This 177-nucleotide RNA was probed chemically with 2A3 and DMS. It was measured as part of the RMDB library OK2TRN. The reactions ran in a buffer of 150 mM KOAc, 10 mM MgCl2 and 150 mM bicine (pH 8.5), at 24 C. For DMS, 3,856 sequencing reads were counted.
RNA sequence: GGGAACGACUCGAGUAGAGUCGAAAAAAGGUCACGGUUGGCGCCCUUGUUGCUAAUGAAGGUUGGAACGCUUCUGAAGAUGCACUGACUGCUGUUAUCACUGCAGCCUAUUUAACUAUUUGUCACCCAUAAAUGGGCGUUUCGACGCCCAUUUAUGAAAAGAAACAACAACAACAAC
Reactivity to 2A3 in 0.01 (KOAc 150mM, MgCl2 10mM, bicine 150mM(pH8.5), 24C), signal-to-noise 2, nucleotides 027 to 126: a000a040g060g010u030c060a030c120g100g020u080u060g040g000c000g060c030c030c060u060u080g120u070u020g000c010u070a100a100u130g030a020a000g110g030u060u090g080g050a060a030c030g030c090u030u000c000u050g100a070a040g050a040u080g000c030a010c050u030g130a050c000u010g000c000u010g040u160u070a170u260c060a060c100u060g000c040a040g000c030c010u110a120u080u120u010a120a030c010u050a210u180u110u080g070u040c040a040c040c040
Reactivity to DMS in 0.01 (KOAc 150mM, MgCl2 10mM, bicine 150mM(pH8.5), 24C), signal-to-noise 4, nucleotides 027 to 126: a050a040g000g010u000c040a090c090g000g020u000u000g010g020c060g000c060c040c030u000u010g020u000u000g010c060u010a080a100u020g000a090a060g000g010u010u010g010g000a070a090c140g000c050u000u010c050u000g000a120a110g000a080u010g020c030a100c080u000g010a040c040u000g010c030u000g000u000u010a110u010c150a110c050u000g000c030a040g010c010c050u000a090u000u010u010a070a080c130u000a080u000u010u010g010u000c080a100c080c050